[RMDB]
RNA sequence: GGGAACGACUCGAGUAGAGUCGAAAAGAUAUGGACAAAUCGGGAGUACGCUAAUCGGAAACGAUUGGUAGUACGAGGAUCGAGUUUGUCCUAAGUCAAAAGUAGACCUUCUUCGGAAGGUCUACAACAUACUAUAUCGCUUCGGCGAUAUAGUAUGAAAAGAAACAACAACAACAAC
Reactivity to DMS in 0.01 (KOAc 150mM, MgCl2 10mM, bicine 150mM(pH8.5), 24C), signal-to-noise 5, nucleotides 027 to 126: g000a010u000a010u010g000g000a010c010a000a010a020u000c000g000g000g000a010g030u000a000c000g000c000u010a000a010u010c000g020g000a000a000a020c000g010a010u000u000g000g010u000a040g030u000a000c000g000a080g010g000a010u010c000g000a030g000u010u000u000g000u000c010c000u000a000a060g000u000c010a090a070a110a140g010u000a000g000a010c000c000u000u000c000u000u010c210g020g010a010a000g010g000u000c000u000a000c000a080a190
Reactivity to 2A3 in 0.01 (KOAc 150mM, MgCl2 10mM, bicine 150mM(pH8.5), 24C), signal-to-noise 4, nucleotides 027 to 126: g000a010u010a010u040g000g000a000c010a000a010a010u010c000g010g000g000a020g000u010a000c000g000c020u020a010a000u010c000g010g010a010a000a000c000g000a000u010u010g020g020u120a150g010u000a010c020g030a120g000g010a000u010c010g020a150g200u000u010u010g010u020c010c000u000a010a000g010u000c020a000a040a060a170g000u000a000g000a010c000c000u000u020c020u050u100c300g110g000a000a000g020g000u000c000u000a000c000a000a000
The record gives the reactivity of an RNA of 177 nucleotides to DMS and 2A3. The reactions ran in a buffer of 150 mM KOAc, 10 mM MgCl2 and 150 mM bicine (pH 8.5), at 24 C. For 2A3, 24,725 sequencing reads were counted. DMS adducts were read by reverse transcription with MarathonRT. 2A3 adducts were read by reverse transcription with SuperScript II with manganese.